[RMDB]
RNA sequence: GGGAACGACUCGAGUAGAGUCGAAAAGCAAUGUCCAGCACGGUGGCCGGCCGCAGCCCGCCGUCGAGGUGAUCGUGCAGCAACGCCUUGGGGGCUAGCCUGAUCGUCUGCAGGGUCGGCGCAGCGGCCCCGCCCCGUAUUUCGAUACGGGGCGGGGAAAAGAAACAACAACAACAAC
Reactivity to 2A3 in 0.01 (KOAc 150mM, MgCl2 10mM, bicine 150mM(pH8.5), 24C), signal-to-noise 1, nucleotides 027 to 126: g030c020a050a150u110g110u110c050c010a040g040c050a020c050g150g050u100g070g010c000c030g000g000c000c000g040c010a000g020c040c000c060g010c030c010g300u060c050g040a020g000g050u080g000a120u120c000g030u150g090c040a020g010c060a100a060c040g080c030c080u190u140g050g000g090g090g130c000u030a010g020c010c000u050g030a100u040c040g090u030c050u040g000c090a070g070g000g060u050c080g000g010c020g000c000a010g050c000g000g080
Reactivity to DMS in 0.01 (KOAc 150mM, MgCl2 10mM, bicine 150mM(pH8.5), 24C), signal-to-noise 1, nucleotides 027 to 126: g040c110a120a070u000g010u000c020c020a130g000c070a050c060g000g010u000g000g020c030c090g010g040c020c040g000c060a080g000c070c020c070g010c020c010g020u000c070g020a020g010g000u000g010a090u010c020g010u000g000c150a100g010c030a050a050c120g000c060c030u000u010g020g000g000g000g020c010u000a090g010c060c060u000g000a040u010c030g020u020c020u000g010c070a130g010g040g000u000c050g010g020c050g040c090a050g000c000g000g000